[RMDB]
RNA sequence: GGGAACGACUCGAGUAGAGUCGAAAAGAUAUGGAGCGCAUUUCUACGAACUACACGUCCUCUCGGAAACGAGAGGUCGUGCGUAGAUUCAACUCCUAAGUCAAAGUCGAGCGUUCGCGCUCGACAACUUCACGAUAAACUUCGGUUUAUCGUGAAGAAAAGAAACAACAACAACAAC
Reactivity to 2A3 in 0.01 (KOAc 150mM, MgCl2 10mM, bicine 150mM(pH8.5), 24C), signal-to-noise 3, nucleotides 027 to 126: g030a020u080a020u150g010g000a010g020c090g020c240a110u020u100u000c000u010a000c000g030a120a060c090u170a030c300a000c010g010u010c000c000u000c000u000c010g030g010a090a070a050c000g010a000g010a010g010g000u000c010g000u000g000c010g000u000a000g000a000u040u030c020a050a090c010u000c000c010u020a160a010g040u010c070a210a040a040g000u010c000g000a000g020c020g000u110u140c300g000c000g000c100u000c020g000a000c010a000a000
Reactivity to DMS in 0.01 (KOAc 150mM, MgCl2 10mM, bicine 150mM(pH8.5), 24C), signal-to-noise 3, nucleotides 027 to 126: g000a070u000a300u010g000g000a010g030c030g030c240a220u000u000u000c020u010a010c000g000a040a030c120u010a300c000a010c000g000u000c000c000u000c000u020c010g010g000a080a100a100c010g000a000g010a010g010g010u000c000g040u000g000c000g000u000a010g000a010u000u000c160a130a070c000u000c000c000u010a040a170g000u010c030a060a120a100g020u000c000g020a010g010c010g010u000u020c220g010c010g010c000u000c000g010a000c010a020a080
The record gives the reactivity of an RNA of 177 nucleotides to 2A3 and DMS. DMS (dimethyl sulfate) methylates the pairing face of unpaired adenines and cytosines. The RNA was probed in 150 mM KOAc, 10 mM MgCl2 and 150 mM bicine (pH 8.5) at 24 C. The data come from the RNA Mapping Database (RMDB), library TTRDEL. The 2A3 profile rests on 6,476 reads. 2A3 adducts were read by reverse transcription with SuperScript II with manganese.